[RMDB]
RNA sequence: GGGAACGACUCGAGUAGAGUCGAAAACUGCCUAAAAACCAGCUAGCGUGACUUCUACAAGAUUGCUUGUGUCCUGUUAGAAGUCUCAAAAUAGCAAGCUACGGUUACGAAAUUGUCUAGUUUCGUGACAAGAGAUUGAUAGACUCGCAAACUAAUGGACGAAAUAAUUGUUCGCAAUUAUUUCGUCAAAAGAAACAACAACAACAAC
Reactivity to DMS in 0.01 (KOAc 150mM, MgCl2 10mM, bicine 150mM(pH8.5), 24C), signal-to-noise 2, nucleotides 027 to 156: c050u000g000c010c020u010a010a040a100a090a120c090c060a090g010c030u000a150g020c020g000u000g000a060c010u000u000c000u010a070c000a020a000g000a040u000u000g040c110u010u010g020u000g020u010c000c000u010g030u000u010a030g020a060a030g020u010c010u030c100a090a070a100a160u000a040g040c020a050a070g020c030u000a190c050g020g000u000u030a020c020g010a050a040a020u000u000g010u010c110u000a090g000u000u000u000c020g010u000g000a060c020a080a050g030a160g010a110u020u010g010a150u010a060g000a050c000u010c020g030c060a080a070a170c080u010a100a170u020g060
Reactivity to 2A3 in 0.01 (KOAc 150mM, MgCl2 10mM, bicine 150mM(pH8.5), 24C), signal-to-noise 5, nucleotides 027 to 156: c020u090g020c020c020u100a110a090a040a050a060c040c030a030g060c060u120a030g040c050g150u100g020a010c000u010u000c000u000a010c010a020a000g000a010u040u080g030c010u010u010g000u000g000u020c000c000u000g010u020u020a000g000a000a000g020u010c020u030c030a060a090a010a030u140a010g010c000a000a000g000c000u000a000c000g000g000u000u000a000c000g010a010a000a000u080u090g010u000c000u000a000g000u000u000u000c000g000u000g000a000c000a000a000g010a000g020a050u040u240g110a020u030a010g000a010c010u030c110g110c090a080a070a070c060u160a100a080u200g120